The record gives the reactivity of an RNA of 177 nucleotides to 2A3 and DMS. Conditions: 150 mM KOAc, 10 mM MgCl2 and 150 mM bicine (pH 8.5), 24 C. DMS adducts were read by reverse transcription with MarathonRT.
RNA sequence: GGGAACGACUCGAGUAGAGUCGAAAAGGGAGCGGAACACACGAAACGCGAGGGGAGGGGGUCACGAAGAAGCCGAAAAAGUGUGGAAAGGCGAAGAAUAUAUAGAGUGACGAUAUAUAUGAAAGAAGGGUUAUCUUUAGUUCGCUAAAGAUAACCCAAAAGAAACAACAACAACAAC
Reactivity to 2A3 in 0.01 (KOAc 150mM, MgCl2 10mM, bicine 150mM(pH8.5), 24C), signal-to-noise 2, nucleotides 027 to 126: g010g040g040a040g040c090g020g060a120a000c030a000c000a000c060g060a110a140a000c070g030c020g040a150g000g000g000g000a140g020g000g020g000g000u010c000a000c040g000a000a070g150a030a040g010c000c000g150a030a020a030a010a000g050u100g000u050g050g020a040a000a000g030g010c050g000a030a000g110a100a010u120a000u050a000u000a020g050a030g060u040g010a000c070g000a010u020a000u000a000u010a000u090g180a080a130a090g130a120a080
Reactivity to DMS in 0.01 (KOAc 150mM, MgCl2 10mM, bicine 150mM(pH8.5), 24C), signal-to-noise 2, nucleotides 027 to 126: g000g130g000a200g010c160g000g020a170a110c090a020c010a030c050g000a010a140a150c170g040c160g000a030g000g030g000g010a060g040g000g000g010g000u020c040a020c050g030a020a110g000a150a040g000c020c010g010a050a060a110a140a120g000u000g000u020g000g050a030a060a230g030g020c020g000a020a010g000a140a050u000a040u000a040u060a060g020a110g010u010g000a010c080g040a100u000a020u010a030u000a010u020g020a120a020a090g000a080a090